An RNA of 207 nucleotides, treated with DMS and 2A3 and read out base by base. The reactions ran in a buffer of 150 mM KOAc, 10 mM MgCl2 and 150 mM bicine (pH 8.5), at 24 C. It was measured as part of the RMDB library OK3TST. Values cover nucleotides 27 to 156. The 2A3 profile rests on 790 reads.
[RMDB]
RNA sequence: GGGAACGACUCGAGUAGAGUCGAAAAAACCUUCUCGGCUCUGAUUAUAGGCGGCGUCGCCGAUAUAGCACGUUUCCUCGGCGAGACGACGGCGGUGGUGGUGGUGGGCGAGACGACGCCCGUUCGGAACCUCGGUGAGGUGCGAAGAGGAGUUUUGUCCCUAACUAAAUUUCGAUUUAGUUAGGGAAAAAGAAACAACAACAACAAC
Reactivity to DMS in 0.01 (KOAc 150mM, MgCl2 10mM, bicine 150mM(pH8.5), 24C), signal-to-noise 1, nucleotides 027 to 156: a080a050c050c050u000u000c070u000c020g020g030c010u000c020u000g010a130u000u010a120u000a080g010g040c050g030g030c050g030u000c030g030c000c020g030a090u000a080u000a120g010c020a110c020g020u010u000u000c030c040u010c060g020g000c010g020a060g030a070c020g010a120c050g020g020c020g000g040u000g030g020u000g000g020u000g010g020u000g000g010g030c020g000a130g000a070c060g020a080c010g000c020c000c010g020u000u010c060g000g010a120a040c010c010u000c030g020g000u000g010a070g000g000u000g000c040g000a040a100g000a080g010g010a150g010u000u000u000u000g000
Reactivity to 2A3 in 0.01 (KOAc 150mM, MgCl2 10mM, bicine 150mM(pH8.5), 24C), signal-to-noise 1, nucleotides 027 to 156: a000a000c010c000u050u010c050u030c010g030g010c010u000c000u040g080a150u140u110a080u190a270g090g000c020g000g010c020g100u020c020g010c010c000g000a020u030a030u060a140g060c060a010c100g000u000u050u030c010c000u010c040g070g020c020g010a040g000a020c040g000a000c020g040g040c020g000g070u060g010g000u050g000g030u050g000g000u040g010g040g000c030g000a020g000a030c020g000a000c010g000c000c000c020g010u090u090c030g010g050a040a020c000c010u050c040g040g090u080g010a010g110g000u060g010c020g000a020a010g030a030g050g000a020g000u030u020u020u060g020